[RMDB]
RNA sequence: GGGAACGACUCGAGUAGAGUCGAAAAUCAUUGCCUGGGGCCUAGGAGUAUCCAGUAGAACACAUGCAAGAGUAACACUAUUAGUUUCUCUGUUCAUUGUUGCCUGCCCUAAACUCUUGGUUUAGACGCGCAAUUGGUAAUUCGUUACCAAUUGCGCAAAAGAAACAACAACAACAAC
Reactivity to 2A3 in 0.01 (KOAc 150mM, MgCl2 10mM, bicine 150mM(pH8.5), 24C), signal-to-noise 1, nucleotides 027 to 126: u080c010a010u020u130g080c010c030u050g000g000g030g060c000c000u030a030g000g060a030g050u050a060u120c070c020a000g000u040a040g040a050a040c060a010c010a020u100g040c040a010a170g020a020g080u050a000a000c040a040c040u260a150u300u200a060g000u000u010u000c010u000c000u010g050u130u140c020a060u060u060g030u010u060g070c030c010u000g040c000c020c030u010a050a030a000c000u050c000u060u100g050g040u070u010u090a100g000a060c030
Reactivity to DMS in 0.01 (KOAc 150mM, MgCl2 10mM, bicine 150mM(pH8.5), 24C), signal-to-noise 2, nucleotides 027 to 126: u000c090a090u010u000g030c020c010u000g000g040g000g020c160c070u010a040g000g000a110g000u000a070u000c220c170a120g000u020a020g010a080a160c060a070c170a020u000g010c280a040a060g000a040g010u000a030a010c020a130c180u000a170u000u020a060g000u000u000u000c000u010c030u000g000u010u000c060a070u000u000g000u000u000g000c150c020u020g010c070c040c050u010a060a050a030c010u040c070u010u010g000g020u010u020u010a110g000a150c260